[RMDB]
RNA sequence: GGGAACGACUCGAGUAGAGUCGAAAAUGGCCAUGCUUCGGCAUGGCCACUUGCGUAGCUCGCAAAUUUAUUUAGCUACGCUUAAUAAAAAUUUGCGAUAUAAGUUGGGGUUGUUCGCAACCCCAAACAAAGCGUGAAUGUUCGCAUUCACGCUUUGAAAAGAAACAACAACAACAAC
Reactivity to DMS in 0.01 (KOAc 150mM, MgCl2 10mM, bicine 150mM(pH8.5), 24C), signal-to-noise 1, nucleotides 027 to 126: u010g000g020c000c010a000u000g020c010u000u000c180g020g040c000a000u000g000g040c000c000a000c020u000u000g000c000g020u000a020g010c030u010c040g000c010a010a000a060u000u000u010a040u000u010u010a030g010c000u000a010c030g010c000u000u020a010a050u010a030a030a030a040a080u000u000u000g000c000g000a090u010a080u000a080a100g000u000u000g010g010g010g010u000u000g000u000u000c170g020c020a010a030c000c010c010c010a000a010a070
Reactivity to 2A3 in 0.01 (KOAc 150mM, MgCl2 10mM, bicine 150mM(pH8.5), 24C), signal-to-noise 1, nucleotides 027 to 126: u040g000g000c000c000a000u010g000c000u010u090c190g030g040c000a000u000g030g000c040c000a010c000u030u060g000c010g050u040a040g060c010u000c060g050c040a000a050a000u150u220u210a120u100u140u070a070g000c010u040a010c060g050c000u030u090a090a050u070a010a100a020a000a000u000u010u040g000c010g020a010u000a000u010a180a080g130u050u030g000g010g010g010u020u010g020u020u010c020g000c010a000a000c000c000c000c000a000a000a000